Chemical mapping of a 207-nucleotide RNA with 2A3 and DMS. For DMS, 9,131 sequencing reads were counted. 2A3 adducts were read by reverse transcription with SuperScript II with manganese. The data come from the RNA Mapping Database (RMDB), library OK3TST. The reactions ran in a buffer of 150 mM KOAc, 10 mM MgCl2 and 150 mM bicine (pH 8.5), at 24 C.
[RMDB]
RNA sequence: GGGAACGACUCGAGUAGAGUCGAAAAUGAAGCAGUAAAAAGAGAAAUGUGAAUCCCCUCUUCUUACCUCCUAUAACAUGCUAAUUAACAUCACUGCAAUUAACCACCAUUCACAGCUCUUCAGCUGCUCUGUGGAACCUCAGCCCACUCUGAAAUAAUUUAGCAUACUAUUCGUAGUAUGCUAAAUAAAAGAAACAACAACAACAAC
Reactivity to 2A3 in 0.01 (KOAc 150mM, MgCl2 10mM, bicine 150mM(pH8.5), 24C), signal-to-noise 3, nucleotides 027 to 156: u120g070a040a010g000c010a010g000u080a010a090a010a050a000g040a020g010a020a120a150u070g000u040g040a050a100u070c000c000c000c040u010c040u090u010c010u030u060a090c020c010u060c020c010u080a050u020a170a040c040a020u080g000c020u050a130a090u150u080a100a020c010a040u100c020a030c070u060g000c040a030a090u060u070a060a020c030c030a010c050c010a030u010u010c010a010c010a150g140c020u000c000u040u010c020a020g000c000u000g000c010u060c040u040g060u040g040g010a040a060c000c030u030c020a040g030c000c000c040a050c010u080c070u050g050a080a130a110u130a060
Reactivity to DMS in 0.01 (KOAc 150mM, MgCl2 10mM, bicine 150mM(pH8.5), 24C), signal-to-noise 4, nucleotides 027 to 156: u000g020a060a050g030c040a060g010u010a020a080a070a040a040g020a060g010a050a080a050u000g020u010g010a100a070u000c040c030c030c050u000c030u000u000c040u000u000a040c040c020u010c030c020u000a100u000a080a090c070a080u000g010c020u010a050a100u000u000a050a080c050a070u000c020a100c060u000g040c030a050a090u000u010a070a090c020c030a070c030c020a190u010u000c030a020c020a040g000c000u000c030u010u000c030a300g010c000u000g010c020u000c030u000g020u000g010g000a060a080c040c020u000c050a070g010c050c000c020a050c090u010c040u000g000a060a070a120u000a120